[RMDB]
RNA sequence: GGGAACGACUCGAGUAGAGUCGAAAACUGGAUUGGAUGCAACCACGAUAUCAAGGUCAGCCUUUUCAAUCUCUUCGAAGGUAGGAUUGAUAAUGAAGUUGCCAUCAAGGGAGGCGACGCGGAUGGCCGGAGUGUAGGAAUUCGUUCCUACACUCCGAAAAGAAACAACAACAACAAC
Reactivity to 2A3 in 0.01 (KOAc 150mM, MgCl2 10mM, bicine 150mM(pH8.5), 24C), signal-to-noise 4, nucleotides 027 to 126: c040u060g070g020a120u070u090g060g000a050u090g070c040a070a050c020c020a030c070g060a050u050a030u190c050a070a040g050g000u020c020a010g010c000c000u050u070u010u040c010a000a030u000c120u010c000u180u090c070g110a120a020g110g000u060a020g020g030a010u020u010g000a010u030a110a060u120g050a110a010g020u050u030g020c030c000a040u040c030a100a120g080g010g010a040g000g050c030g010a010c040g030c040g030g000a030u030g030g000c020
Reactivity to DMS in 0.01 (KOAc 150mM, MgCl2 10mM, bicine 150mM(pH8.5), 24C), signal-to-noise 3, nucleotides 027 to 126: c060u010g000g010a110u000u010g020g010a080u010g000c060a080a080c020c050a140c140g000a100u000a050u010c090a080a090g010g000u000c050a080g010c010c030u000u000u000u000c040a050a030u000c030u030c070u000u000c080g010a100a090g000g010u000a050g000g000a030u000u000g010a030u000a040a070u000g010a090a120g000u000u000g010c020c030a030u000c050a120a120g000g000g000a090g000g010c000g010a030c070g000c100g010g000a020u000g000g000c060
Structure probing data (2A3 and DMS) for a 177-nucleotide construct. The RNA was probed in 150 mM KOAc, 10 mM MgCl2 and 150 mM bicine (pH 8.5) at 24 C. The 2A3 profile rests on 4,717 reads.